RNA sequence: GGGAACGACUCGAGUAGAGUCGAAAAGGGGUCGAAUUGUGGAAGCGUGCCAGCAGCUUUGUCAGCUCUGAAGCCUCCACGGAGCUUGGAUUUAAGCUGCGGUAAUUCGCUUCCUCAAUUCGACGGAGGCACCCAAAGUCGCGGUUCGCCGCGACAACAUAUCUUCGAGCUUCGGCUCGAAGAUAUGAAAAGAAACAACAACAACAAC
Reactivity to 2A3 in 0.01 (KOAc 150mM, MgCl2 10mM, bicine 150mM(pH8.5), 24C), signal-to-noise 1, nucleotides 027 to 156: g040g000g010g000u010c000g000a000a000u000u010g000u030g010g010a010a000g020c130g090u060g010c130c080a110g000c000a000g000c010u040u020u040g020u020c000a000g000c000u000c000u010g050a110a010g000c000c000u030c000c000a030c010g010g000a000g000c040u120u110g120g000a070u280u250u150a020a000g000c010u020g010c010g000g000u070a050a120u210u190c020g000c000u000u000c010c000u000c000a000a000u000u000c000g000a000c000g010g000a000g000g010c010a040c000c030c000a070a160a010g010u010c000g000c000g020g010u040u120c160g090c080c010g000c000g000a000c000a000a000

The record gives the reactivity of an RNA of 207 nucleotides to 2A3.
The reactions ran in a buffer of 150 mM KOAc, 10 mM MgCl2 and 150 mM bicine (pH 8.5), at 24 C.
2A3 adducts were read by reverse transcription with SuperScript II with manganese.
Source: RMDB library RNAMAK, as collected in RNAgym.